[RMDB]
RNA sequence: GGGAACGACUCGAGUAGAGUCGAAAAGUGAGAACGUUCGCGUUCUCACAAAUACUAAGACCGAAGGUUAGAUGGCCGACACUUCCCUUGGAAACGGCACAAAAAUGAUAGGUUUCGACCUAUCAAAGGAAGUUAAAAAGUUCGCUUUUUAACUUCCAAAAGAAACAACAACAACAAC
Reactivity to 2A3 in 0.01 (KOAc 150mM, MgCl2 10mM, bicine 150mM(pH8.5), 24C), signal-to-noise 2, nucleotides 027 to 126: g010u020g000a010g010a000a000c010g000u030u030c120g000c000g120u010u010c010u010c000a000c000a000a000a000u060a020c030u030a050a040g030a040c000c030g230a190a070g040g020u060u070a070g030a250u110g080g000c020c000g030a010c040a040c090u010u010c000c010c000u020u060g010g020a070a090a030c010g000g000c040a020c050a110a090a010a010a020u070g000a000u000a000g010g000u010u020u100c110g010a010c000c010u000a000u000c000a000a000a000
Reactivity to DMS in 0.01 (KOAc 150mM, MgCl2 10mM, bicine 150mM(pH8.5), 24C), signal-to-noise 4, nucleotides 027 to 126: g010u000g010a000g010a000a010c010g000u000u020c210g040c010g030u000u000c000u000c000a000c000a050a040a060u000a090c180u000a150a150g010a060c040c020g010a110a100g020g020u000u000a050g000a110u000g020g000c020c000g000a110c110a070c120u000u000c010c010c020u000u010g010g020a080a050a140c040g000g010c020a070c170a020a030a090a090a060u000g000a000u000a010g000g000u000u000u010c210g020a020c000c000u020a000u000c000a020a070a110